[RMDB]
RNA sequence: GGGAACGACUCGAGUAGAGUCGAAAAGCUCGGUGACACCGCGUCUGCCUGGGUCCGAAAGAUUUCUUGUCGCAAAUCUACAAGACAUUGGUUAACGUGUGGGCCGCUUGAGCGGCCGCUCGGCGGGAGUUGGGUGCGUGUUCGCGCGUAUCCAACUAAAAGAAACAACAACAACAAC
Reactivity to 2A3 in 0.01 (KOAc 150mM, MgCl2 10mM, bicine 150mM(pH8.5), 24C), signal-to-noise 9, nucleotides 027 to 126: g020c010u010c020g010g030u050g030a030c010a010c050c020g010c010g030u000c030u050g010c000c000u030g050g000g030u010c010c000g040a090a050a010g020a010u010u020u010c030u050u120g100u080c050g020c100a020a030a080u030c010u030a030c030a060a010g010a000c020a040u020u070g030g010u060u100a050a010c010g000u020g010u090g040g040g000c010c000g000c010u100u160g020a020g010c000g000g000c010c010g000c010u010c010g030g000c000g010g010g010
Reactivity to DMS in 0.01 (KOAc 150mM, MgCl2 10mM, bicine 150mM(pH8.5), 24C), signal-to-noise 9, nucleotides 027 to 126: g000c020u000c020g010g010u010g010a120c070a110c030c030g010c030g010u010c040u010g000c010c010u010g020g000g010u000c010c020g000a130a140a060g000a040u000u000u000c020u010u030g010u020c150g000c150a030a040a050u010c020u010a050c130a130a060g000a020c040a060u010u010g000g010u000u010a070a100c030g000u010g010u010g010g010g020c010c010g000c010u010u020g010a060g010c010g010g000c030c020g000c010u010c020g000g000c020g000g000g000
The record gives the reactivity of an RNA of 177 nucleotides to 2A3 and DMS.
The data come from the RNA Mapping Database (RMDB), library OK1LIB.
For 2A3, 29,960 sequencing reads were counted.